[RMDB]
RNA sequence: GGGAACGACUCGAGUAGAGUCGAAAACAAGACUACAUGGUCCUUGAGGGUAGAGACCAGCCUAUUCAUCUUUAUUAAUUUCAAUUGUUUAUUCAGUAUAGAUUUAUUUAGCAUGUUCUCCAUGCCAGGCCUUGUGUUCACAAUGUAGUUAGGGAACCAGCUCGUUUACAUUCGUGUAAACGAGCUGAAAAGAAACAACAACAACAAC
Reactivity to 2A3 in 0.01 (KOAc 150mM, MgCl2 10mM, bicine 150mM(pH8.5), 24C), signal-to-noise 3, nucleotides 027 to 156: c050a010a060g050a010c020u030a010c000a040u050g010g020u080c030c000u040u070g070a020g000g060g040u060a000g040a000g010a150c020c000a010g010c000c010u020a050u060u040c020a040u050c090u080u080u060a120u060u180a130a120u080u100u130c040a030a060u100u060g080u090u220u150a090u060u150c040a020g020u050a070u080a150g020a030u010u090u080a050u050u080u070a120g020c030a040u070g020u110u160c060u010c090c010a020u040g020c010c020a020g000g020c000c000u060u000g050u030g020u100u100c030a010c010a060a010u040g020u020a050g030u050u080a030g050g020g020a000a040c020